Chemical mapping of a 207-nucleotide RNA with DMS and 2A3. For 2A3 the reverse transcriptase was SuperScript II with manganese. For 2A3, 1,324 sequencing reads were counted.

RNA sequence: GGGAACGACUCGAGUAGAGUCGAAAAACGAGCCAUCCGAAACGUACGCUUCCCGUACGGAAACCAUCCAGGAUGGGAAAGCAUGCGGCAUGCGAAAGGAUGGGUCUAUAGCCAAGACGCGAGGCAUGCGAAAGGAUGGUGUCCGUGUUAUCCAUCCUAUGCCUAGUUCUUUCGAGAACUAGGCAUAAAAAGAAACAACAACAACAAC
Reactivity to DMS in 0.01 (KOAc 150mM, MgCl2 10mM, bicine 150mM(pH8.5), 24C), signal-to-noise 2, nucleotides 027 to 156: a080c040g000a300g040c030c000a060u000c040c000g000a050a080a140c020g050u000a010c070g000c050u010u010c020c030c000g000u000a060c000g010g010a110a180a210c070c070a100u000c000c010a160g020g020a110u020g020g020g000a050a030a150g010c000a050u000g050c050g030g000c070a070u030g000c010g030a090a080a230g000g000a090u000g010g020g020u000c080u010a070u000a180g020c080c030a090a050g010a150c000g040c080g010a170g020g010c040a000u000g000c010g060a160a160a190g010g000a020u000g000g020u040g000u020c020c030g000u010g030u000u010a170u010c020c020a180u010c020c020
Reactivity to 2A3 in 0.01 (KOAc 150mM, MgCl2 10mM, bicine 150mM(pH8.5), 24C), signal-to-noise 2, nucleotides 027 to 156: a000c030g020a000g000c010c000a000u000c000c000g110a180a060a050c060g000u050a030c060g020c030u030u000c060c020c000g000u000a010c040g000g060a080a070a050c030c010a050u040c000c040a040g060g030a050u050g010g000g010a070a020a000g020c000a000u010g020c050g070g000c110a000u120g050c030g150a120a080a060g010g030a040u020g010g010g000u010c040u070a140u080a040g040c060c040a060a020g060a020c040g030c020g110a000g160g000c000a000u040g000c030g040a160a090a040g000g000a000u000g010g000u000g040u020c030c000g000u020g020u100u100a050u000c000c000a020u080c000c020

It was measured as part of the RMDB library OK3TST.